RNA sequence: GGGAACGACUCGAGUAGAGUCGAAAAGACUUUUCGCGUAAAUUGUGAACCUCGUCAAUUACAAAUAUCGUAUUGCUGAAUUUUUUCACAAUGGCAUCAUCUGGUAAUUUAGACAAUUCCUUGGCGAGCUGCAGGGCGAAUUCGUUCGCCCUGCAGCAAAAGAAACAACAACAACAAC
Reactivity to 2A3 in 0.01 (KOAc 150mM, MgCl2 10mM, bicine 150mM(pH8.5), 24C), signal-to-noise 1, nucleotides 027 to 126: g050a030c000u160u120u080u120c010g000c000g030u040a130a300a240u250u300g000u060g000a060a000c000c000u000c040g050u000c000a010a010u080u000a190c220a130a000a000u210a010u080c050g010u000a000u000u140g080c080u000g130a220a230u140u170u000u140u160u140c000a000c000a050a000u100g000g000c000a030u000c000a040u000c140u000g050g010u030a000a000u000u000u130a000g000a000c000a000a030u000u010c000c000u030u030g010g040c000g120a000